[RMDB]
This 177-nucleotide RNA was probed chemically with 2A3 and DMS. The reactions ran in a buffer of 150 mM KOAc, 10 mM MgCl2 and 150 mM bicine (pH 8.5), at 24 C.
RNA sequence: GGGAACGACUCGAGUAGAGUCGAAAAUUUACGGUAUUCGUACCGUAAACGAGCAAGCAAGCACCGCAACGAGACAAGACGAUAAUAAGAUCGAGCAUGCUGAUAGUAGGAUCUUCGGAUCCUACAAUCCCUCUUAAAUUUUCGAAUUUAAGAGGGAAAAAGAAACAACAACAACAAC
Reactivity to 2A3 in 0.01 (KOAc 150mM, MgCl2 10mM, bicine 150mM(pH8.5), 24C), signal-to-noise 5, nucleotides 027 to 126: u000u000u000a000c010g000g000u010a000u030u090c130g030u040a040c000c000g000u010a000a000a010c030g030a030g050c040a070a010g030c000a040a000g020c010a020c030c050g010c030a050a070c050g040a010g030a070c030a080a020g060a040c040g040a030u060a170a050u110a190a070g080a150u040c040g010a020g050c020a030u080g030c030u070g040a070u070a120g000u010a000g000g010a000u020c000u010u030c150g040g000a000u000c010c000u000a000c000a000a000
Reactivity to DMS in 0.01 (KOAc 150mM, MgCl2 10mM, bicine 150mM(pH8.5), 24C), signal-to-noise 7, nucleotides 027 to 126: u000u000u000a010c000g000g010u000a010u000u020c180g030u000a010c000c000g010u000a000a010a030c100g010a140g010c070a060a080g000c090a060a080g010c020a060c060c050g020c050a030a060c070g000a080g000a070c070a060a060g010a110c040g010a050u000a050a070u000a090a090g010a060u000c040g010a120g010c070a080u000g010c050u010g020a090u000a100g010u000a000g010g010a010u000c000u000u010c190g020g010a010u000c000c000u000a000c010a050a130
The DMS profile rests on 10,995 reads. For DMS the reverse transcriptase was MarathonRT.